RNA sequence: GGGAACGACUCGAGUAGAGUCGAAAAGGAUCCUCUCACAGGAUUGUCUCUGUGUUCCGAAACUCCAACAGUUUUGCUUCGGGACACCUACAGCAAGACUGUAGGUAUAGAGAGUAGGAGAGGAUCGUGGAGGAAAAUAGUUCGCUAUUUUCCUCCAAAAAGAAACAACAACAACAAC
Reactivity to DMS in 0.01 (KOAc 150mM, MgCl2 10mM, bicine 150mM(pH8.5), 24C), signal-to-noise 4, nucleotides 027 to 126: g000g000a020u000c000c000u000c010u000c010a130c120a170g020g010a130u010u000g010u000c000u010c000u000g020u000g020u000u010c000c000g010a010a010a040c010u010c220c110a110a120c240a150g000u010u020u010u000g000c070u000u000c020g010g010g000a010c000a030c000c000u000a010c010a010g000c040a140a110g030a300c010u000g000u000a000g000g000u010a040u000a010g000a000g000a040g010u010a130g000g000a020g020a020g010g000a000u000c000g020
Reactivity to 2A3 in 0.01 (KOAc 150mM, MgCl2 10mM, bicine 150mM(pH8.5), 24C), signal-to-noise 2, nucleotides 027 to 126: g110g000a000u010c020c010u030c000u020c010a170c050a120g000g230a300u160u250g160u060c000u020c000u060g040u000g000u020u010c000c010g030a020a030a010c080u040c060c020a110a050c030a300g030u100u040u160u180g040c040u010u030c030g010g020g010a000c010a010c000c000u000a010c000a010g010c010a000a300g120a200c000u010g000u010a000g000g010u000a010u140a050g010a000g020a010g040u060a080g030g090a000g000a010g000g010a000u000c000g020